Background: The record gives the reactivity of an RNA of 207 nucleotides to DMS and 2A3. For DMS the reverse transcriptase was MarathonRT. It was measured as part of the RMDB library OK3TST. The DMS profile rests on 9,203 reads. Conditions: 150 mM KOAc, 10 mM MgCl2 and 150 mM bicine (pH 8.5), 24 C.

RNA sequence: GGGAACGACUCGAGUAGAGUCGAAAAGAAUCAAUUGCGAAAACUCGUCAUUCCACUGCUGGUGUUGGUUUGAUUUCUCCUCCUCCUCAUCAUGAUAUCUACUCUAUUGAAGAUUUGAAGCAGUUGAUUUAUGACAUGAAGAGUGCCAACCCUCGUAAUCGAUUAUUAGUUUCGACUAAUAAUCGAUAAAAGAAACAACAACAACAAC
Reactivity to DMS in 0.01 (KOAc 150mM, MgCl2 10mM, bicine 150mM(pH8.5), 24C), signal-to-noise 3, nucleotides 027 to 156: g010a110a110u000c040a060a110u010u010g000c020g010a100a080a070a080c040u010c050g020u000c020a120u010u000c020c010a150c150u000g020c010u000g030g000u010g020u000u010g010g000u000u000u000g000a090u000u000u010c030u000c030c010u000c040c020u000c020c020u000c080a050u010c040a060u010g000a100u010a060u000c020u000a080c020u000c020u030a130u010u020g020a110a150g000a170u000u000u010g020a000a130g010c010a040g000u000u000g010a060u000u000u000a060u000g010a140c010a040u000g000a050a060g010a160g030u000g020c020c010a030a070c030c000c000u000c050g010u010a110
Reactivity to 2A3 in 0.01 (KOAc 150mM, MgCl2 10mM, bicine 150mM(pH8.5), 24C), signal-to-noise 5, nucleotides 027 to 156: g060a010a050u100c020a030a040u040u110g030c020g070a040a060a050a090c070u050c060g040u030c040a070u090u010c030c020a030c050u060g020c040u080g040g140u100g040u070u030g030g040u000u020u060g090a100u060u100u050c110u060c010c020u060c000c010u030c010c030u020c020a040u000c000a020u120g050a010u040a050u060c020u020a040c020u010c020u070a070u100u160g090a120a080g040a190u100u150u200g060a040a000g000c000a000g010u030u030g030a040u040u050u090a060u070g020a010c000a000u030g020a010a020g050a020g030u020g000c010c000a010a020c010c000c010u010c020g030u080a040